[RMDB]
RNA sequence: GGGAACGACUCGAGUAGAGUCGAAAAUAGGAACACCUUCUGGUUCAGACAGAGGCUUAUAUCAAAACUCGAAUCAGUUUUUGUGAGUGAAAAAGCUCUCCCCUUUUUUGCUCUUCAGAUUCCAAUAACUGUUUAGGUAGUUCGCUACCUAAACAGUAAAAGAAACAACAACAACAAC
Reactivity to 2A3 in 0.01 (KOAc 150mM, MgCl2 10mM, bicine 150mM(pH8.5), 24C), signal-to-noise 8, nucleotides 027 to 126: u180a030g030g010a060a030c030a060c040c000u070u040c010u040g050g020u090u070c020a030g050a120c030a030g040a030g050g030c080u220u130a150u030a030u230c100a080a080a020a060c030u040c050g030a010a030u010c000a020g030u000u010u030u160u180g130u050g010a000g010u030g020a010a010a010a010a000g020c030u020c020u030c030c000c000c010u000u000u000u000u010u020g000c000u000c000u060u070c050a080g020a210u050u000c020c000a040a030u090a120
Reactivity to DMS in 0.01 (KOAc 150mM, MgCl2 10mM, bicine 150mM(pH8.5), 24C), signal-to-noise 3, nucleotides 027 to 126: u020a070g000g000a110a050c120a120c130c050u010u000c020u030g000g010u010u010c080a160g000a180c120a050g000a200g000g000c110u000u030a050u010a090u020c130a090a090a180a070c040u010c050g010a040a030u000c060a060g000u000u000u020u000u000g010u020g000a050g030u000g000a010a060a010a000a030g010c080u040c100u000c030c020c050c000u010u010u010u000u000u000g010c030u010c020u010u000c120a110g010a120u000u000c030c020a060a060u000a090

The data come from the RNA Mapping Database (RMDB), libraries RFM100 and RFMREP. An RNA of 177 nucleotides, treated with 2A3 and DMS and read out base by base. In probing experiments dimethyl sulfate is read out at A N1 and C N3, which are open when not base-paired. For DMS the reverse transcriptase was MarathonRT. Conditions: 150 mM KOAc, 10 mM MgCl2 and 150 mM bicine (pH 8.5), 24 C.